[RMDB]
RNA sequence: GGGAACGACUCGAGUAGAGUCGAAAAGGACAUCGACCGCGACCGCGGGAUGGUCGCGCUGGACGAACUCAUCCCCAACACCGGCGAACGUUUCCUGCAGAACGGCGAGGCGUUUCGCGUCGAAGCAGUGGACUGACCGAUUCGUCGGUCAGUCCACAAAAGAAACAACAACAACAAC
Reactivity to DMS in 0.01 (KOAc 150mM, MgCl2 10mM, bicine 150mM(pH8.5), 24C), signal-to-noise 1, nucleotides 027 to 126: g010g030a210c090a010u010c010g020a140c250c010g090c010g000a030c000c010g010c170g000g050g000a070u010g000g010u000c000g000c000g030c060u010g010g010a140c020g000a080a060c090u010c030a150u000c050c050c000c080a050a070c110a050c060c030g000g020c010g010a030a030c040g010u000u000u000c010c090u010g100c130a160g010a150a300c050g000g000c160g010a020g010g000c010g020u000u000u000c010g010c030g020u000c090g000a090a050g030c130a060
Reactivity to 2A3 in 0.01 (KOAc 150mM, MgCl2 10mM, bicine 150mM(pH8.5), 24C), signal-to-noise 1, nucleotides 027 to 126: g010g000a000c010a150u020c020g030a030c070c000g000c010g010a000c020c020g010c130g150g060g110a110u200g030g000u000c000g000c000g000c040u070g030g020a110c070g040a070a030c040u000c080a100u100c000c020c000c000a040a010c070a020c050c030g040g000c030g010a010a020c010g000u020u040u000c000c020u020g030c040a120g060a300a040c020g060g040c100g020a030g030g020c000g000u010u060u160c040g000c000g020u000c010g010a050a050g020c090a010